RNA sequence: GGGAACGACUCGAGUAGAGUCGAAAAAAGAAAAACGUCUUACAGCCAGUGUCUAAACUCCAAACAACGGAAUGUAUCAAUGAGACCUUGUAUAUGGAUACACGUGCAUUUAAAACCGCCCUGCCGGCGUUUGGGAUGUGUUCGCACAUCCCAAACGAAAAGAAACAACAACAACAAC
Reactivity to DMS in 0.01 (KOAc 150mM, MgCl2 10mM, bicine 150mM(pH8.5), 24C), signal-to-noise 2, nucleotides 027 to 126: a090a050g000a040a020a080a090a180c060g000u000c040u000u000a110c150a120g030c000c000a050g020u000g000u020c090u000a070a120a110c040u010c000c010a050a050a080c110a040a140c120g010g000a090a040u000g010u000a060u000c140a120a050u010g050a050g010a070c010c010u010u030g010u020a040u000a050u000g030g000a060u030a040c030a030c100g000u010g040c060a030u020u000u000a040a040a160a060c080c080g000c030c000c070u010g000c060c000g000g010
Reactivity to 2A3 in 0.01 (KOAc 150mM, MgCl2 10mM, bicine 150mM(pH8.5), 24C), signal-to-noise 2, nucleotides 027 to 126: a000a000g160a000a060a020a000a020c030g030u020c040u100u070a080c060a020g000c010c000a030g000u040g030u000c040u050a070a050a130c040u010c020c040a150a180a090c040a040a020c040g020g040a070a070u080g030u080a160u070c080a110a060u120g030a020g030a110c000c000u020u010g050u080a050u010a020u240g060g000a010u060a090c040a000c000g080u060g040c010a000u000u020u180a060a050a000a040c030c000g010c060c000c000u070g000c020c000g020g020
Conditions: 150 mM KOAc, 10 mM MgCl2 and 150 mM bicine (pH 8.5), 24 C. An RNA of 177 nucleotides, treated with DMS and 2A3 and read out base by base. For DMS the reverse transcriptase was MarathonRT. The 2A3 profile rests on 1,011 reads. For 2A3 the reverse transcriptase was SuperScript II with manganese. It was measured as part of the RMDB library RFM100. Values cover nucleotides 27 to 126.